[RMDB]
Description:
The record gives the reactivity of an RNA of 177 nucleotides to DMS and 2A3. 2A3 adducts were read by reverse transcription with SuperScript II with manganese. The data come from the RNA Mapping Database (RMDB), library 15KREP.
RNA sequence: GGGAACGACUCGAGUAGAGUCGAAAACUCUCGGAUGCACUUAAACGACAGAUUCGCAUUGCAUGCCGUAAGUGUAAUUUAGCUUUCCGGUUAACCACCUCAAAGCUACGCGCUAAUGAUAAUAUCUACUACAAAUUAUCUUCGGAUAAUUUGUAGUAAAAGAAACAACAACAACAAC
Reactivity to DMS in 0.01 (KOAc 150mM, MgCl2 10mM, bicine 150mM(pH8.5), 24C), signal-to-noise 4, nucleotides 027 to 126: c090u000c060u010c010g000g020a110u000g000c000a040c150u010u000a090a080a090c010g020a050c150a050g000a150u020u000c140g020c110a100u000u000g010c050a060u000g020c010c000g010u010a040a030g000u000g010u020a070a100u000u000u000a020g010c010u000u010u000c040c070g020g000u010u000a100a090c220c200a120c000c000u010c120a010a020a030g000c020u000a020c300g010c080g020c040u000a060a110u010g000a130u000a090a080u000a250u010c070u010
Reactivity to 2A3 in 0.01 (KOAc 150mM, MgCl2 10mM, bicine 150mM(pH8.5), 24C), signal-to-noise 6, nucleotides 027 to 126: c010u000c020u010c020g030g020a020u030g000c010a010c030u090u110a130a140a020c040g070a010c020a080g120a250u160u090c030g000c070a040u010u120g000c020a000u090g120c000c000g020u040a030a030g000u010g030u050a100a240u060u080u100a010g000c000u010u020u000c020c020g010g000u010u030a030a030c030c020a010c000c020u010c030a010a010a020g000c000u020a030c050g030c010g010c030u050a090a050u090g100a030u070a190a070u090a130u050c030u030